Chemical mapping of a 177-nucleotide RNA with 2A3 and DMS. 2A3 adducts were read by reverse transcription with SuperScript II with manganese. The RNA was probed in 150 mM KOAc, 10 mM MgCl2 and 150 mM bicine (pH 8.5) at 24 C. Values cover nucleotides 27 to 126.
RNA sequence: GGGAACGACUCGAGUAGAGUCGAAAACUGUCGUUCUUCGGAACGACAGAAAGAACGCGUGGGUCACGCAAGGAGGAGCGUGUGGGACGCGACUAACCCAAAAAAGCGUUCGGUUCGCCGAACGCAAGUGGGUAUAGUUGUUCGCAACUAUACCCACAAAAGAAACAACAACAACAAC
Reactivity to 2A3 in 0.01 (KOAc 150mM, MgCl2 10mM, bicine 150mM(pH8.5), 24C), signal-to-noise 3, nucleotides 027 to 126: c010u000g010u000c000g010u000u020c010u040u030c200g080g000a000a000c000g000a000c000a000g000a000a010a000g020a120a030c020g000c010g000u030g000g220g090u080c000a010c030g000c040a040a070g160g090a070g060g050a110g040c020g010u020g020u040g020g140g050a010c000g000c000g020a010c030u060a040a090c000c000c000a040a080a020a020a000a000g000c010g000u010u000c010g000g000u030u040c210g030c050c000g000a010a010c010g000c000a000a010
Reactivity to DMS in 0.01 (KOAc 150mM, MgCl2 10mM, bicine 150mM(pH8.5), 24C), signal-to-noise 2, nucleotides 027 to 126: c010u000g000u010c000g000u000u000c000u000u010c160g020g000a010a030c000g010a020c010a000g000a030a060a070g010a110a090c020g020c020g020u000g020g040g020u010c010a010c010g020c030a070a130g010g020a300g010g020a160g010c020g010u000g000u000g020g010g010a040c020g010c010g010a100c060u010a080a100c000c000c010a010a050a120a050a090a100g000c010g020u000u000c010g020g000u000u010c150g020c000c010g000a010a000c000g030c000a010a000